[RMDB]
RNA sequence: GGGAACGACUCGAGUAGAGUCGAAAAGCAGCAGUGAAUUAAAAUAAAGAUGAAGAUCAAGAACAAGAUACAAACGGCAAGUAUCGUUCGAUCCAUGAGCCGAAUAAUAUCACAAAGAAGAAGAAAAAAGACGUUAAGAAUUCGUUCUUAACGUCUUAAAAGAAACAACAACAACAAC
Reactivity to DMS in 0.01 (KOAc 150mM, MgCl2 10mM, bicine 150mM(pH8.5), 24C), signal-to-noise 2, nucleotides 027 to 126: g020c040a050g000c100a050g020u010g010a050a080u010u000a040a030a120a090u010a060a070a090g000a050u000g000a110a060g010a070u000c000a040a090g000a070a030c080a120a090g000a060u000a010c020a050a120a100c070g010g000c070a060a120g000u000a010u010c020g000u000u000c070g000a020u000c050c050a100u000g000a100g000c020c030g000a060a090u000a050a070u000a050u010c030a020c090a040a050a090g000a050a050g010a080a070g020a010a040a110a080
Reactivity to 2A3 in 0.01 (KOAc 150mM, MgCl2 10mM, bicine 150mM(pH8.5), 24C), signal-to-noise 2, nucleotides 027 to 126: g050c040a030g000c010a030g010u000g060a020a040u190u130a040a180a040a100u150a000a040a010g060a010u060g030a040a100g030a020u100c030a040a070g010a030a040c080a080a100g000a000u060a030c000a010a200a000c010g110g030c030a060a060g010u010a030u030c020g010u040u000c040g010a000u000c010c010a030u080g060a000g010c020c000g000a050a000u060a010a020u070a080u060c010a060c030a180a090a030g070a080a000g040a050a000g010a100a070a000a030